[RMDB]
About this RNA
The record gives the reactivity of an RNA of 207 nucleotides to DMS and 2A3. Conditions: 150 mM KOAc, 10 mM MgCl2 and 150 mM bicine (pH 8.5), 24 C.

RNA sequence: GGGAACGACUCGAGUAGAGUCGAAAAGCUACAACAACAGCCACAAAAGGCUCUUCCUGCUCCUGUAACUACUGCGGCUGCAGCCGUCAGCGGCGCGGGACAGCCCGCCUAUGAUCUGGAAUUGGAAGAGGGCGAGGGACUGGCGCGCCUGGGCGCAACCGCAGUAUUUUUUCGAAAAUACUGCGGUAAAAGAAACAACAACAACAAC
Reactivity to DMS in 0.01 (KOAc 150mM, MgCl2 10mM, bicine 150mM(pH8.5), 24C), signal-to-noise 1, nucleotides 027 to 156: g020c000u020a110c070a050a130c030a090a120c060a080g000c000c000a120c040a080a050a130a230g000g000c000u010c040u000u000c050c020u000g000c010u010c000c020u010g000u030a080a110c070u010a020c050u000g000c050g030g000c060u000g010c090a300g010c000c000g030u010c010a020g010c040g010g050c060g010c120g150g000g000a040c070a050g000c040c010c020g150c000c010u010a080u000g010a130u000c080u010g010g010a160a160u000u010g000g000a120a030g020a150g000g010g040c020g000a240g070g080g000a160c020u000g030g040c050g020c010g020c040c010u000g010g000g030c110g040c040a100
Reactivity to 2A3 in 0.01 (KOAc 150mM, MgCl2 10mM, bicine 150mM(pH8.5), 24C), signal-to-noise 3, nucleotides 027 to 156: g020c020u120a100c070a120a010c020a050a020c010a140g000c000c010a080c100a080a150a030a040g050g000c010u000c010u030u020c010c020u030g040c000u040c000c000u120g040u200a100a130c060u110a030c020u140g000c020g020g000c010u110g050c100a060g020c020c000g100u150c030a040g050c050g060g010c010g010c020g000g010g080a060c000a010g060c030c000c010g000c010c020u140a160u150g030a120u050c040u060g090g120a140a150u120u160g010g010a000a030g040a090g020g010g000c040g030a280g010g000g050a050c030u020g000g040c020g000c000g000c010c020u060g000g060g010c000g000c010a010
Source: RMDB library OK3TST, as collected in RNAgym. For 2A3 the reverse transcriptase was SuperScript II with manganese.